[RMDB]
RNA sequence: GGGAACGACUCGAGUAGAGUCGAAAAGGACAAUAUAUUAAAUGGAUUUUUGGAAUUAGGAGUUGGAAUAGGAGCUUGCUCCGUCCACUCCACGCAUCGACCUGGUAUUGCAGUACUUCCAGGAACGUAAGAAUGGUAUUUUCGAAUACCAUUCUUAAAAAGAAACAACAACAACAAC
Reactivity to DMS in 0.01 (KOAc 150mM, MgCl2 10mM, bicine 150mM(pH8.5), 24C), signal-to-noise 9, nucleotides 027 to 126: g000g000a110c070a050a060u020a060u030a090u020u020a060a070a090u020g000g000a120u000u010u010u010u000g000g000a070a070u020u010a100g010g000a020g010u020u020g020g000a030a040u030a120g030g000a020g000c020u030u010g010c000u000c000c000g000u000c010c000a030c010u000c000c010a060c190g010c110a040u010c060g000a130c050c040u000g000g000u010a070u010u010g010c060a170g010u010a110c140u000u000c000c010a020g010g010a030a040c100g010
Reactivity to 2A3 in 0.01 (KOAc 150mM, MgCl2 10mM, bicine 150mM(pH8.5), 24C), signal-to-noise 9, nucleotides 027 to 126: g030g020a020c030a060a030u100a020u070a050u210u300a090a120a130u150g100g030a120u080u050u070u080u140g110g030a110a070u110u050a200g000g010a020g030u150u110g060g010a080a070u100a290g010g000a000g000c030u070u090g030c000u040c000c000g000u000c000c000a000c010u000c000c000a000c020g060c010a040u070c020g060a070c000c010u010g010g020u070a060u070u150g050c050a030g040u060a070c040u050u000c000c010a010g020g020a070a090c020g040